[RMDB]
RNA sequence: GGGAACGACUCGAGUAGAGUCGAAAAGAAAGAAAGAAGAAUCACCAGGAGGCAAGGAUCCUCAACUACGUUAUUCGGGCACCUUGAGUUGAGAGGAGCUAGUGGUUCGCCCGGCCUGGAGAUCAAAACACGACAGGCGGGUUCGCCCGCCUGUCAACGUAGUAGAAAGCUUCGGCUUUCUACUACGAAAAGAAACAACAACAACAAC
Reactivity to 2A3 in 0.01 (KOAc 150mM, MgCl2 10mM, bicine 150mM(pH8.5), 24C), signal-to-noise 1, nucleotides 027 to 156: g060a000a190a000g000a000a100a020g090a090a000g050a130a040u020c000a000c010c020a000g060g000a060g030g050c020a080a130g080g000a020u030c000c010u010c030a000a000c020u290a140c040g090u120u050a110u120u090c000g000g000g000c020a020c050c010u080u150g110a020g000u010u000g020a010g000a000g020g000a000g020c010u040a020g070u020g080g020u020u090c080g020c000c000c000g000g040c000c000u010g000g010a020g000a040u010c010a000a110a040a050c100a020c110g010a000c020a000g000g050c030g000g000g000u060u040c050g130c080c000c020g020c000c000u020g000u010c000a000a000
This 207-nucleotide RNA was probed chemically with 2A3. Values are in units of 0.01, from 0 to 300, in steps of 10. For 2A3, 655 sequencing reads were counted. The RNA was probed in 150 mM KOAc, 10 mM MgCl2 and 150 mM bicine (pH 8.5) at 24 C. The data come from the RNA Mapping Database (RMDB), library M2RFPK. Values cover nucleotides 27 to 156.